[RMDB]
RNA sequence: GGGAACGACUCGAGUAGAGUCGAAAACCCUGGUUAUUCGUAACCAGGGGUUGAGUGAAUCCUCUCACUGCAUCGGUGGAUCACACGAAACGCAUGGACGACAAUUACGGUUAUUCGUAACCGUAAAAACCCGAUACUACUUCGGUAGUAUCGGGUUAAAAGAAACAACAACAACAAC
Reactivity to 2A3 in 0.01 (KOAc 150mM, MgCl2 10mM, bicine 150mM(pH8.5), 24C), signal-to-noise 1, nucleotides 027 to 126: c000c000c000u000g000g010u050u010a060u010u090c240g030u010a010a010c000c000a000g000g050g000g000u050u070g070a050g030u000g040a020a070u000c020c000u030c000u070c030a040c090u210g070c060a080u110c130g110g030u070g000g030a060u060c020a000c000a010c160g080a030a050a010c080g000c130a130u160g080g030a050c030g000a030c030a050a030u070u010a020c000g020g000u000u000a000u070u020c060g060u030a000a060c000c000g020u000a000a020a000
Reactivity to DMS in 0.01 (KOAc 150mM, MgCl2 10mM, bicine 150mM(pH8.5), 24C), signal-to-noise 2, nucleotides 027 to 126: c010c000c010u000g000g020u000u000a000u010u030c160g000u000a000a010c010c000a040g000g000g000g020u000u000g020a170g030u010g000a090a080u000c000c020u000c070u010c060a160c090u000g010c060a100u000c100g000g010u010g020g010a070u000c080a080c040a070c080g000a030a050a050c060g000c030a050u000g000g020a080c040g010a060c150a090a130u010u000a010c000g010g010u000u000a000u000u000c210g000u000a010a010c000c000g010u000a000a010a040